[RMDB]
RNA sequence: GGGAACGACUCGAGUAGAGUCGAAAACCAAGAUUCCAUAACUCACUACCCAGCUCUUAAGAUGGUUCAAACACAUCUUAGCCACUAUGUUCUUAACAUAGAUUGGUUGUGGUUUGCAUUUGAGACUGGGCUGAAUAAUGUUCGCAUUAUUCAGCCCAAAAGAAACAACAACAACAAC
Reactivity to 2A3 in 0.01 (KOAc 150mM, MgCl2 10mM, bicine 150mM(pH8.5), 24C), signal-to-noise 2, nucleotides 027 to 126: c000c000a000a010g080a070u050u110c050c020a010u080a120a100c010u010c070a020c010u050a020c010c010c000a010g050c010u040c030u060u070a010a010g020a050u020g030g030u160u090c050a120a080a020c040a010c000a080u020c000u090u020a000g040c010c010a030c010u010a000u020g010u000u090c190u220u200a000a020c000a000u040a030g040a100u010u100g000g010u020u070g020u020g030g050u030u020u060g000c040a040u010u010u120g030a020g010a040c020u040